[RMDB]
RNA sequence: GGGAACGACUCGAGUAGAGUCGAAAAGAAGAGAAGUGAGUAAACGCCUAUCCGGUAUAAGCACAGCCCGUCAAAAGGCGUGCGGCGAGGGCACCAGAAGCUGUGCUUAUAACUGGGCCCUCGAAGAAUGCAGUCAUCACUUCGGUGAUGACUGCAUAAAAGAAACAACAACAACAAC
Reactivity to 2A3 in 0.01 (KOAc 150mM, MgCl2 10mM, bicine 150mM(pH8.5), 24C), signal-to-noise 1, nucleotides 027 to 126: g020a020a000g040a010g000a160a000g030u030g030a000g000u080a110a060a060c000g030c000c000u050a110u030c000c000g130g000u150a130u000a110a020g000c000a000c000a000g000c000c000c000g120u150c050a000a160a000a000g000g060c000g000u010g000c100g120g000c060g040a010g050g020g000c070a280c080c000a000g010a020a000g000c050u020g020u020g000c010u110u000a160u100a260a000c020u000g040g070g000c020c000c000u000c000g000a000a000g050a000
Reactivity to DMS in 0.01 (KOAc 150mM, MgCl2 10mM, bicine 150mM(pH8.5), 24C), signal-to-noise 1, nucleotides 027 to 126: g050a100a120g030a060g000a050a020g010u050g040a070g020u000a080a010a030c030g000c040c000u000a060u080c060c020g000g030u030a070u040a080a080g000c000a010c000a120g050c020c030c000g040u110c300a000a060a140a050g020g010c000g000u010g000c200g000g030c010g000a000g000g000g020c000a100c000c000a030g000a290a020g040c000u010g000u060g010c020u000u010a070u000a020a210c030u000g010g030g000c000c010c000u010c000g000a060a030g000a090